[RMDB]
RNA sequence: GGGAACGACUCGAGUAGAGUCGAAAAACAAAAUAUCUUCACAGCAACAUCUAGAUUAUUAGUGUUUGACUGAAUAACUGGGGAUCACAGUCUAGCUGACACAUAAAAUUGACCAUUAAUCAGUUGUAAGGUUUGUGCUUGUUUUAGGUGAUUUUGAACUACGUACGACGUUCGCGUCGUACGUAGUAAAAGAAACAACAACAACAAC
Reactivity to 2A3 in 0.01 (KOAc 150mM, MgCl2 10mM, bicine 150mM(pH8.5), 24C), signal-to-noise 1, nucleotides 027 to 156: a020c020a000a050a000a030u150a090u010c100u100u190c150a070c020a010g090c020a070a000c020a020u040c020u030a150g010a120u100u150a220u100u070a120g000u020g040u060u020u050g200a190c030u040g070a150a100u020a110a000c040u020g020g010g020g020a060u050c000a000c000a040g010u000c020u050a080g040c020u030g040a010c020a010c010a060u110a060a110a100a010u040u100g070a020c000c060a050u020u130a130a080u060c050a020g020u000u020g070u130a080a080g010g000u060u050u100g000u000g070c070u040u000g030u110u030u040u100a080g000g050u100g090a140u040u000u020u110g050a000
This 207-nucleotide RNA was probed chemically with 2A3. 2A3 is a SHAPE reagent: it acylates the 2'-hydroxyl of flexible nucleotides of all four kinds. The reactions ran in a buffer of 150 mM KOAc, 10 mM MgCl2 and 150 mM bicine (pH 8.5), at 24 C. For 2A3, 428 sequencing reads were counted.